[RMDB]
RNA sequence: GGGAACGACUCGAGUAGAGUCGAAAAGUUCAUUAGCAGGAAGCAGCCGGUACCGUAGGUGUUUUUUGCCAUUCCCGGUUGGACACAAAGCUGGCCGAACAGCGCGGCUUGCUGGUCACCGGCAAUCUGCUAUUCUUGUCUUCGGACAAGAAUAGCAAAAAGAAACAACAACAACAAC
Reactivity to 2A3 in 0.01 (KOAc 150mM, MgCl2 10mM, bicine 150mM(pH8.5), 24C), signal-to-noise 1, nucleotides 027 to 126: g060u040u030c030a050u200u280a010g080c070a000g080g150a190a030g040c060a020g000c030c010g000g000u020a040c000c060g030u110a040g200g000u020g000u020u010u030u030u140u100g040c010c010a000u020u050c010c020c000g000g010u040u060g020g030a000c010a000c020a070a090a000g000c010u040g070g060c060c000g020a180a070c090a140g100c090g000c000g120g010c010u060u000g000c050u090g050g000u010c070a010c000c010g000g040c000a010a050u060c020
Reactivity to DMS in 0.01 (KOAc 150mM, MgCl2 10mM, bicine 150mM(pH8.5), 24C), signal-to-noise 2, nucleotides 027 to 126: g020u000u000c100a090u000u010a080g030c030a040g000g010a100a100g010c110a140g000c000c010g000g010u000a020c020c020g010u000a160g000g030u000g000u000u000u010u000u010u010g000c010c000a130u000u000c010c000c010g010g020u000u010g000g010a040c070a030c040a030a110a050g020c000u000g010g000c010c060g000a090a110c160a040g000c200g030c030g010g010c020u000u000g010c000u000g020g010u010c210a030c020c010g000g000c010a040a050u040c120